[RMDB]
RNA sequence: GGGAACGACUCGAGUAGAGUCGAAAACGUCGUGAACUAGCGACAAUGCAUUAGGUCCAUCGUUAUCUAACCGAAACAUCGUGACUAGUUUUAGAAUAGAACCAUGAGAGGACGCUGGCAAACAAAGACGGAGUGUAUGAUUCGUUGUACGCUCCGUAAAAGAAACAACAACAACAAC
Reactivity to 2A3 in 0.01 (KOAc 150mM, MgCl2 10mM, bicine 150mM(pH8.5), 24C), signal-to-noise 9, nucleotides 027 to 126: c050g010u000c000g010u030g080a120a070c060u030a070g010c000g020a010c000a020a050u070g000c020a040u050u100a020g000g020u000c010c010a060u030c050g030u030u070a070u050c030u030a010a050c030c020g030a040a010a020c030a060u100c050g080u070g110a090c060u050a080g040u030u010u030u070a060g030a080a050u050a030g020a030a010c030c010a030u040g020a020g010a030g030g010a000c000g000c010u000g010g000c000a030a030a020c030a010a100a010g080
Reactivity to DMS in 0.01 (KOAc 150mM, MgCl2 10mM, bicine 150mM(pH8.5), 24C), signal-to-noise 9, nucleotides 027 to 126: c130g010u000c020g010u010g000a080a080c110u020a100g010c050g010a030c030a110a090u020g010c040a050u020u020a060g010g010u000c030c030a120u010c060g010u010u020a130u020c050u010a080a120c100c030g000a080a060a070c040a060u010c070g020u010g010a090c060u010a080g000u000u000u010u010a090g010a070a110u020a040g000a060a090c090c090a040u010g000a060g000a090g000g010a020c030g010c020u000g000g000c040a060a070a070c130a050a070a090g000
Source: RMDB library OK1LIB, as collected in RNAgym. Chemical mapping of a 177-nucleotide RNA with 2A3 and DMS. 2A3 adducts were read by reverse transcription with SuperScript II with manganese. The reactions ran in a buffer of 150 mM KOAc, 10 mM MgCl2 and 150 mM bicine (pH 8.5), at 24 C. The DMS profile rests on 100,227 reads. DMS adducts were read by reverse transcription with MarathonRT.